[RMDB]
RNA sequence: GGGAACGACUCGAGUAGAGUCGAAAACCCUGAUGUCCGGUUUUUUCCGUCAGCGCAGUGCCCGGCUGUUCUGUUGCGGCGCGUCUCCCCACAUAGCGCGGGAUGAAUGACACGACCCACACCACGAGCAAUAACAAAUCUUCGGAUUUGUUAUUGCAAAAGAAACAACAACAACAAC
Reactivity to 2A3 in 0.01 (KOAc 150mM, MgCl2 10mM, bicine 150mM(pH8.5), 24C), signal-to-noise 6, nucleotides 027 to 126: c010c000c000u030g060a060u080g040u050c060c040g030g020u030u010u010u020u130u050c030c020g020u030c030a030g020c020g000c050a020g020u020g070c000c010c000g030g010c020u030g040u100u010c040u050g050u060u080g040c030g020g000c000g000c010g060u010c030u000c010c010c010c000a050c010a060u160a030g070c060g000c030g030g010g010a040u080g070a060a070u070g010a010c010a010c070g060a070c000c020c000a050c010a020c030c010a050c050g050a070
Reactivity to DMS in 0.01 (KOAc 150mM, MgCl2 10mM, bicine 150mM(pH8.5), 24C), signal-to-noise 4, nucleotides 027 to 126: c030c000c010u010g010a100u020g000u010c030c070g000g010u010u000u010u000u010u020c000c040g030u010c030a060g000c040g010c020a090g020u020g010c020c010c000g000g020c020u000g010u010u000c060u000g010u010u020g020c060g000g000c060g010c040g000u010c030u000c020c010c000c020a070c110a100u000a080g000c060g030c060g020g010g000a070u010g000a120a090u020g000a120c080a070c070g000a110c020c020c010a050c080a100c070c070a070c140g000a200